RNA sequence: GGGAACGACUCGAGUAGAGUCGAAAAGAUAUGGAUCACUCUCCCCACCCAACCUCUUGUCAGCUUAUACGUUCGGAAACGAACGAUAGAGCUUGGAUUUAGAGGUUGGAGGAGUGAUCCUAAGUCACUGUAAAGGACAGUUCGCUGUCCUUUACAGAAAAGAAACAACAACAACAAC
Reactivity to DMS in 0.01 (KOAc 150mM, MgCl2 10mM, bicine 150mM(pH8.5), 24C), signal-to-noise 2, nucleotides 027 to 126: g000a060u010a300u000g010g010a010u000c000a010c010u000c000u000c110c010c000c060a300c120c010c000a000a010c020c000u000c000u000u000g000u000c010a050g000c010u010u000a090u020a060c010g000u000u020c000g050g010a060a070a260c020g000a000a000c000g020a060u000a070g000a000g000c010u010u000g020g010a020u000u000u000a020g010a050g000g010u000u010g010g010a020g010g000a010g000u000g020a010u010c000c000u050a050a080g000u000c110a210
Reactivity to 2A3 in 0.01 (KOAc 150mM, MgCl2 10mM, bicine 150mM(pH8.5), 24C), signal-to-noise 1, nucleotides 027 to 126: g110a020u300a120u300g030g010a040u000c000a030c000u030c050u180c100c070c000c030a020c000c020c000a000a000c000c000u020c000u030u000g020u000c000a010g000c010u040u090a150u020a300c000g010u020u010c010g000g010a070a060a050c010g000a000a020c000g000a010u050a020g150a020g020c000u010u120g140g000a030u180u200u160a020g000a000g120g000u020u000g040g000a010g000g000a000g000u020g000a000u040c000c000u000a050a020g080u080c030a020